Notes: An RNA of 207 nucleotides, treated with DMS and 2A3 and read out base by base. For 2A3, 10,256 sequencing reads were counted. For DMS, 10,009 sequencing reads were counted. For 2A3 the reverse transcriptase was SuperScript II with manganese. Source: RMDB library RNAMAK, as collected in RNAgym.
RNA sequence: GGGAACGACUCGAGUAGAGUCGAAAAGGUGCACUUCGGUGCACCAAAAAGCGUACUACUUCGUCUUCGAGGAUCUAUAUCAGUAGCUAUCCCAAAUAGGAUAGCUAAGUUAUAGGGAGAGGGCGAAGUAUCGCAAAAACAUGACUUCGGUCAUGAAGCUUAAUAAUAUCUUCGGAUAUUAUUAAGCAAAAGAAACAACAACAACAAC
Reactivity to DMS in 0.01 (KOAc 150mM, MgCl2 10mM, bicine 150mM(pH8.5), 24C), signal-to-noise 3, nucleotides 027 to 156: g020g030u000g030c010a000c010u000u010c290g080g040u000g000c010a000c010c000a000a010a030a060a050g010c020g010u000a060c200u000a040c000u000u000c000g030u000c000u000u000c010g000a170g020g010a070u000c010u000a010u000a010u000c040a130g040u000a030g010c010u000a010u000c000c000c010a020a120a290u000a050g000g000a020u000a000g020c010u000a000a030g010u000u000a020u010a010g000g000g010a090g020a050g040g030g000c010g040a010a010g020u000a000u000c000g010c030a050a060a090a120a140c010a020u000g010a040c000u000u010c300g060g000u000c000a020u000g000a090a150
Reactivity to 2A3 in 0.01 (KOAc 150mM, MgCl2 10mM, bicine 150mM(pH8.5), 24C), signal-to-noise 6, nucleotides 027 to 156: g000g000u010g000c010a010c020u070u140c300g090g000u010g000c010a010c000c010a000a000a000a000a000g040c040g030u090a080c040u000a000c000u030u000c000g020u000c000u010u000c010g060a230g020g000a010u000c000u010a000u000a010u020c050a160g200u020a000g000c000u000a000u010c010c020c020a170a230a160u300a100g000g000a000u000a000g000c000u000a020a000g000u000u010a000u000a000g010g000g000a000g000a000g010g010g000c000g000a000a000g000u000a000u010c010g000c000a070a050a020a010a010c000a010u000g000a000c000u050u050c300g100g000u000c010a000u020g050a030a010